[RMDB]
RNA sequence: GGGAACGACUCGAGUAGAGUCGAAAAGCAAGACGGUGGCGAACAGCAGGGGAUGCCGGUCGAUCAGGUCGCCGUGCAAUACUACUGCCCGCAGUUCAGCGAUGGCUUCCAUAUCCUGGAAACCAUAGCUCACCGACUUUUUCGAAAGUCGGUGAGCAAAAGAAACAACAACAACAAC
Reactivity to 2A3 in 0.01 (KOAc 150mM, MgCl2 10mM, bicine 150mM(pH8.5), 24C), signal-to-noise 1, nucleotides 027 to 126: g060c130a050a020g040a060c050g090g000u020g020g010c050g000a030a190c110a000g050c010a000g100g000g000g000a000u040g000c000c040g040g240u300c070g120a000u210c180a020g000g260u010c000g000c040c010g060u160g000c000a000a000u100a300c000u070a100c010u130g000c030c000c000g050c010a020g000u060u060c060a000g050c000g130a160u000g010g000c010u000u060c000c000a060u020a200u250c000c030u000g000g000a000a010a000c000c000a000u010a010